[RMDB]
This 207-nucleotide RNA was probed chemically with DMS and 2A3. For DMS the reverse transcriptase was MarathonRT. The RNA was probed in 150 mM KOAc, 10 mM MgCl2 and 150 mM bicine (pH 8.5) at 24 C. Values cover nucleotides 27 to 156.
RNA sequence: GGGAACGACUCGAGUAGAGUCGAAAAGCUGCGUGAAACCUCGCUGUUUUCUUGGCUAACUUUCAGCCAGGUGAGGCAAGGCGGCAAAAAAAAGUUGGGAGCAGCAACGGCAAGCAAAAAAAAAGUUACAAGUUGCGAUGGUUCGCCAUCGCAACAACAUAUUUCCUAGCUUCGGCUAGGAAAUAUGAAAAGAAACAACAACAACAAC
Reactivity to DMS in 0.01 (KOAc 150mM, MgCl2 10mM, bicine 150mM(pH8.5), 24C), signal-to-noise 1, nucleotides 027 to 156: g000c000u000g010c020g040u000g040a150a120a090c020c010u000c030g030c010u000g080u000u000u020u000c050u010u000g010g010c000u000a080a110c260u000u000u000c050a080g050c000c040a060g010g020u010g010a130g000g000c000a070a070g000g030c050g020g000c020a010a010a000a100a070a090a030a010g040u020u000g020g000g030a110g000c050a070g030c010a040a060c040g050g010c040a070a060g020c090a000a000a000a000a020a050a030a100a030g010u000u010a070c060a120a150g000u020u000g020c020g010a020u000g010g010u000u010c290g010c060c000a030u000c050g020c000a000a000c020a030a140
Reactivity to 2A3 in 0.01 (KOAc 150mM, MgCl2 10mM, bicine 150mM(pH8.5), 24C), signal-to-noise 2, nucleotides 027 to 156: g000c000u020g000c020g150u090g090a110a060a050c020c000u000c010g000c000u040g090u040u100u080u060c060u100u080g020g000c020u030a070a090c100u140u290u200c090a010g010c000c010a010g000g020u030g010a020g010g010c000a000a040g080g000c020g000g000c000a090a080a000a000a000a000a000a000g040u070u030g030g010g040a070g020c030a000g010c020a030a040c040g040g000c020a020a040g020c070a060a050a070a050a010a010a000a000a020g030u090u080a080c070a160a060g000u000u000g000c000g000a000u000g000g030u040u050c110g040c050c000a000u000c000g050c000a000a000c000a000a000